[RMDB]
RNA sequence: GGGAACGACUCGAGUAGAGUCGAAAAUGUUAAAGAAGCAGACCGCAUUUACGUUAUUGCAGCAGGUACAAGCUACCAUGCAGGUUUAGUAGGUAAAGAAUUUUUAGAAAAAUGGGCUGGCGUACCACACAUAAACUAGCUUCGGCUAGUUUAUGUGAAAAGAAACAACAACAACAAC
Reactivity to DMS in 0.01 (KOAc 150mM, MgCl2 10mM, bicine 150mM(pH8.5), 24C), signal-to-noise 4, nucleotides 027 to 126: u010g010u000u000a070a060a110g000a120a090g000c030a040g010a100c030c030g000c080a080u010u010u010a050c080g010u020u000a080u010u010g020c020a060g010c100a080g000g010u010a010c060a080a130g010c140u000a030c020c010a070u010g000c010a070g010g010u020u020u030a060g020u000a030g000g000u020a020a040a050g010a040a080u010u020u040u020u030a140g010a020a060a040a020a050u010g000g020g000c010u000g000g000c030g000u010a070c050c030a220
Reactivity to 2A3 in 0.01 (KOAc 150mM, MgCl2 10mM, bicine 150mM(pH8.5), 24C), signal-to-noise 5, nucleotides 027 to 126: u120g010u050u090a120a050a030g150a120a000g050c010a010g020a070c020c050g060c080a030u030u040u070a060c070g110u110u060a140u100u180g000c000a050g000c040a040g030g000u020a010c020a080a120g020c060u020a040c000c030a020u030g010c030a020g010g010u030u080u040a040g050u060a010g030g090u090a080a070a050g100a030a060u110u060u050u120u110a080g110a050a130a030a050a040u050g000g000g030c030u020g000g030c020g020u010a070c000c000a010
Description: An RNA of 177 nucleotides, treated with DMS and 2A3 and read out base by base. The data come from the RNA Mapping Database (RMDB), library OK1LIB. Values cover nucleotides 27 to 126.